Structure probing data (2A3 and DMS) for a 177-nucleotide construct. Values cover nucleotides 27 to 126. For 2A3 the reverse transcriptase was SuperScript II with manganese. The RNA was probed in 150 mM KOAc, 10 mM MgCl2 and 150 mM bicine (pH 8.5) at 24 C. The data come from the RNA Mapping Database (RMDB), library M2PK90.
RNA sequence: GGGAACGACUCGAGUAGAGUCGAAAAGUUAUGGAAAACGUCUUAGCUACCACUACAACAACAUUGCUGGACGGUGAUGGUUCGACUUACUCGAAACCAUCACGUAGUGGUAGUCGUUCCCAUUCAAAUGCACAUUGUCUUUCGAGACAAUGUGCAUAAAAGAAACAACAACAACAAC
Reactivity to 2A3 in 0.01 (KOAc 150mM, MgCl2 10mM, bicine 150mM(pH8.5), 24C), signal-to-noise 2, nucleotides 027 to 126: g010u040u050a070u240g120g010a080a100a000a000c010g040u030c030u070u120a040g000c000u020a010c010c000a010c020u060a000c010a100a020c030a040a000c020a180u060u300g040c050u070g070g020a030c040g020g000u000g000a010u020g000g020u000u000c010g010a080c060u100u200a040c020u060c010g020a060a000a000c000c000a000u000c000a000c020g000u020a000g000u010g000g000u000a020g000u000c000g000u030u000c030c010c000a010u100u030c050a000a040
Reactivity to DMS in 0.01 (KOAc 150mM, MgCl2 10mM, bicine 150mM(pH8.5), 24C), signal-to-noise 2, nucleotides 027 to 126: g020u010u010a180u030g000g000a060a060a070a030c010g000u000c050u000u010a160g010c040u000a000c000c010a000c010u040a020c020a040a050c120a080a100c100a080u010u000g030c130u000g000g000a040c080g010g020u000g000a010u000g010g000u000u000c020g030a030c200u010u020a050c220u000c010g000a040a020a050c000c000a030u000c030a000c040g010u000a010g020u020g010g030u010a000g020u000c000g000u000u020c000c000c030a190u000u000c090a010a090